An RNA of 170 nucleotides, treated with DMS and 2A3 and read out base by base. The DMS profile rests on 15,952 reads. The reactions ran in a buffer of 150 mM KOAc, 10 mM MgCl2 and 150 mM bicine (pH 8.5), at 24 C. For 2A3 the reverse transcriptase was SuperScript II with manganese.

RNA sequence: GGGAACGACUCGAGUAGAGUCGAAAAGGUUCACAUCCCCAACCCGCGGGCCGGCUACUCUUCUUUUCCUUUCCUCGUCUUCAUCGGUCAGCCUUCUGAGUUCCUCUUCUUCCUCCUUGCUGAGGAUACCGGACGACGUUCGCGUCGUCCAAAAGAAACAACAACAACAAC
Reactivity to DMS in 0.01 (KOAc 150mM, MgCl2 10mM, bicine 150mM(pH8.5), 24C), signal-to-noise 4, nucleotides 027 to 129: g030g030u000u000c000a090c140a140u030c020c020c010c070a140a130c060c030c030g020c000g000g000g000c000c000g000g070c080u020a060c070u010c040u020u050c030u000u000u000u000c000c000u020u010u020c060c020u020c050g010u040c070u050u010c080a110u030c030g000g000u020c090a080g020c080c060u030u020c030u020g040a140g000u030u040c000c010u000c070u010u070c060u030u010c050c030u020c030c000u040u030g040c000u050g000a090g030g000a050u040a100c090c030
Reactivity to 2A3 in 0.01 (KOAc 150mM, MgCl2 10mM, bicine 150mM(pH8.5), 24C), signal-to-noise 4, nucleotides 027 to 129: g070g000u070u080c050a030c030a120u060c000c000c000c000a040a070c000c000c000g040c000g010g010g020c020c000g000g010c000u020a030c050u020c000u090u030c000u080u050u020u050c000c000u060u040u040c000c010u020c010g050u020c050u050u000c050a130u050c000g010g070u020c020a010g010c010c000u080u010c040u060g090a060g070u010u010c000c000u030c000u070u020c010u040u010c040c010u000c000c020u080u170g040c090u100g050a020g010g000a000u010a030c050c040

Description
The data come from the RNA Mapping Database (RMDB), library 15KLIB.